This 177-nucleotide RNA was probed chemically with DMS and 2A3. The data come from the RNA Mapping Database (RMDB), library OK2TST. The DMS profile rests on 9,657 reads. Values cover nucleotides 27 to 126.
RNA sequence: GGGAACGACUCGAGUAGAGUCGAAAAGGACACCAUGUCCGCCAAGCUAUCCAGCGGUAUGAAGGCGGCCAGCGUCGAUGCGAAGAUCGCGACGAUCACCGUGUUGUGCACCGGCGUCAUGGUGCGCGCCAUGCAGAUAUUUCGAUAUCUGCAUGGCAAAAGAAACAACAACAACAAC
Reactivity to DMS in 0.01 (KOAc 150mM, MgCl2 10mM, bicine 150mM(pH8.5), 24C), signal-to-noise 7, nucleotides 027 to 126: g020g000a130c010a040c050c050a050u000g000u010c120c020g020c010c010a100a150g010c060u010a080u010c120c110a120g000c050g000g010u010a100u010g010a090a130g010g010c010g000g010c120c100a110g010c030g020u010c060g010a040u010g000c020g000a130a120g010a030u000c000g010c090g010a100c120g010a070u010c060a150c070c040g000u000g010u010u010g010u000g000c030a040c070c060g020g000c020g010u000c080a040u000g010g020u000g000c020g010c120
Reactivity to 2A3 in 0.01 (KOAc 150mM, MgCl2 10mM, bicine 150mM(pH8.5), 24C), signal-to-noise 5, nucleotides 027 to 126: g040g020a030c000a000c040c030a040u060g010u020c040c000g000c000c000a050a030g010c010u060a050u210c050c070a020g020c030g040g000u130a090u150g100a090a030g040g000c010g000g020c030c020a020g010c020g030u060c050g040a040u120g020c020g030a120a030g040a120u060c010g020c050g150a120c090g020a080u030c020a020c060c030g040u050g080u190u150g090u110g000c030a010c010c060g010g000c010g030u050c010a040u040g000g000u030g030c020g010c040